Overview
This 177-nucleotide RNA was probed chemically with 2A3 and DMS. The 2A3 profile rests on 4,721 reads. It was measured as part of the RMDB library RFM100. The reactions ran in a buffer of 150 mM KOAc, 10 mM MgCl2 and 150 mM bicine (pH 8.5), at 24 C.
[RMDB]
RNA sequence: GGGAACGACUCGAGUAGAGUCGAAAAGCAGCUCACAGCCCAGAGGACGCCCAGAGCGGCAGCGCGCAGACAGACGGACCGACGGACUCCGCCGCGUCCACCUGUCUGCCCGGCCCGGCACUGCGCGCUGUACUUAGGGCUUCGGCCCUAAGUACAGAAAAGAAACAACAACAACAAC
Reactivity to 2A3 in 0.01 (KOAc 150mM, MgCl2 10mM, bicine 150mM(pH8.5), 24C), signal-to-noise 2, nucleotides 027 to 126: g030c030a010g010c010u020c020a040c000a020g040c000c000c000a040g010a040g040g040a040c040g020c010c070c010a030g010a020g040c050g020g010c020a040g090c020g010c000g000c010a000g000a000c000a000g020a000c070g020g000a000c000c040g020a050c020g010g120a240c070u040c080c020g000c000c010g020c070g000u000c000c000a030c010c000u010g000u010c000u010g000c000c000c000g020g000c040c000c010g020g050c020a020c030u020g010c010g000c000g000
Reactivity to DMS in 0.01 (KOAc 150mM, MgCl2 10mM, bicine 150mM(pH8.5), 24C), signal-to-noise 3, nucleotides 027 to 126: g020c120a110g000c030u000c020a150c100a060g000c010c020c020a090g000a110g000g000a070c000g010c010c020c020a090g000a080g040c070g000g000c020a060g010c070g010c180g010c020a030g000a050c040a030g000a200c090g000g000a000c000c010g000a040c030g000g010a200c120u020c010c010g050c000c040g030c180g000u000c000c000a220c100c000u000g030u000c010u000g000c030c070c010g010g000c080c020c020g000g010c040a110c020u000g040c170g020c010g010